Annotation
An RNA of 207 nucleotides, treated with 2A3 and DMS and read out base by base. The RNA was probed in 150 mM KOAc, 10 mM MgCl2 and 150 mM bicine (pH 8.5) at 24 C. For 2A3, 1,344 sequencing reads were counted.
RNA sequence: GGGAACGACUCGAGUAGAGUCGAAAAGUCUUCCAGGUGGCAGACUCAGGCCCCUGGCUCCCUGGGCCAGGUCUGCAGGAAGGGUCUGUAGGGAGAAAGGUGUCAGCCAAGACCUGGUCAGGCAUUGGCGAUAGGUCUGAACAACAGUCUGACCCAAAUAAUAAUGGGGAUUCGUCCCCAUUAUUAUAAAAGAAACAACAACAACAAC
Reactivity to 2A3 in 0.01 (KOAc 150mM, MgCl2 10mM, bicine 150mM(pH8.5), 24C), signal-to-noise 2, nucleotides 027 to 156: g020u000c000u050u040c020c010a060g100g120u170g190g060c000a000g000a050c010u030c110a090g070g030c020c000c000c040u050g080g000c000u030c040c020c050u100g030g000g010c030c040a030g060g020u060c070u100g020c020a000g000g090a040a070g020g020g010u010c020u050g070u080a060g000g020g010a020g030a040a020a030g060g010u100g030u050c030a020g030c010c000a020a020g040a160c000c030u060g050g000u060c040a020g080g050c080a110u070u140g000g010c000g070a100u120a080g000g060u000c000u040g060a110a080c030a080a010c010a060g030u000c010u000g030a070c020c010c020a140a190
Reactivity to DMS in 0.01 (KOAc 150mM, MgCl2 10mM, bicine 150mM(pH8.5), 24C), signal-to-noise 3, nucleotides 027 to 156: g020u000c030u010u000c020c020a170g030g020u010g040g010c030a040g010a040c010u000c030a120g030g010c010c080c000c000u000g020g010c020u000c020c030c060u020g010g030g010c010c020a040g000g010u000c010u000g000c040a140g010g000a190a120g020g010g020u000c030u010g040u010a100g010g030g010a090g010a100a070a110g020g000u000g030u000c040a180g010c040c040a060a060g000a060c040c010u000g000g010u000c080a050g000g030c060a160u000u000g030g000c030g000a140u000a040g030g010u010c000u010g010a070a090c070a060a060c060a160g000u000c020u010g010a300c000c000c000a030a130